[RMDB]
RNA sequence: GGGAACGACUCGAGUAGAGUCGAAAACCAUAACAGUUCGCUGUUAUGGACUGUCGGAAUGCGGAAUAAUUAAUCGUCCGCUUACGAUUUAUACCGACUAUAAAGCGUAACACUUCGGUGUUACGAAUUGCGUAUGCCAUUUCGAUGGCAUACGCAAAAAAGAAACAACAACAACAAC
Reactivity to 2A3 in 0.01 (KOAc 150mM, MgCl2 10mM, bicine 150mM(pH8.5), 24C), signal-to-noise 1, nucleotides 027 to 126: c000c000a010u000a000a000c000a030g010u060u040c090g020c100u000g000u000u010a000u000g000g020a100c020u030g030u000c010g040g020a130a050u130g010c000g000g040a010a020u060a090a150u230u180a080a080u150c100g030u020c000c000g030c020u000u070a020c000g000a000u000u060u000a050u030a010c000c020g000a010c020u040a050u070a190a050a060g030c040g010u000a000a000c010a000c030u030u020c250g130g000u000g030u000u040a000c030g010a010a040
Reactivity to DMS in 0.01 (KOAc 150mM, MgCl2 10mM, bicine 150mM(pH8.5), 24C), signal-to-noise 2, nucleotides 027 to 126: c020c000a000u000a000a000c000a020g000u000u010c200g020c000u000g000u000u000a000u000g000g010a120c250u000g000u000c010g020g000a080a080u000g000c000g020g000a020a040u000a080a220u020u010a120a070u010c240g000u000c020c020g010c010u000u000a060c040g020a030u000u010u000a060u000a150c000c010g000a050c080u000a120u020a060a100a100g000c000g000u000a000a010c000a010c000u000u000c260g020g000u000g030u000u010a000c000g000a070a050